[RMDB]
The record gives the reactivity of an RNA of 177 nucleotides to 2A3 and DMS. DMS adducts were read by reverse transcription with MarathonRT. 2A3 adducts were read by reverse transcription with SuperScript II with manganese. It was measured as part of the RMDB library TTRDES. Conditions: 150 mM KOAc, 10 mM MgCl2 and 150 mM bicine (pH 8.5), 24 C.
RNA sequence: GGGAACGACUCGAGUAGAGUCGAAAAGAUAUGGAGCCUGUAUGCAGCAACAGCCACUCUCGGAAACGAGAGUGGACAUGCUGCGUACUGGGCUCCUAAGUCAAAGACUAGUGUUCGCACUAGUCAACACACAGUCCUAGUUCGCUAGGACUGUGUGAAAAGAAACAACAACAACAAC
Reactivity to 2A3 in 0.01 (KOAc 150mM, MgCl2 10mM, bicine 150mM(pH8.5), 24C), signal-to-noise 2, nucleotides 027 to 126: g030a010u080a060u220g020g000a010g000c000c020u000g020u010a020u010g010c010a000g000c010a020a110c040a240g030c000c000a010c010u030c000u000c000g040g040a080a080a050c030g020a000g020a020g010u000g020g000a000c000a010u010g000c010u010g040c000g000u000a000c000u020g000g010g010c000u000c000c000u000a050a020g020u010c030a150a070a000g000a000c000u000a020g000u000g070u090u130c300g000c160a000c020u000a000g000u010c000a000a010
Reactivity to DMS in 0.01 (KOAc 150mM, MgCl2 10mM, bicine 150mM(pH8.5), 24C), signal-to-noise 3, nucleotides 027 to 126: g000a070u010a300u000g000g020a010g020c000c000u000g000u000a000u000g010c010a000g010c000a060a080c300a190g000c010c000a000c000u000c010u000c010g010g000a140a060a300c000g030a020g010a030g010u000g000g000a010c060a090u000g010c010u000g000c000g020u000a000c000u010g050g000g000c000u000c000c000u000a010a070g030u000c060a130a170a150g010a000c000u000a000g010u000g010u000u000c270g000c000a020c000u000a000g000u000c010a070a170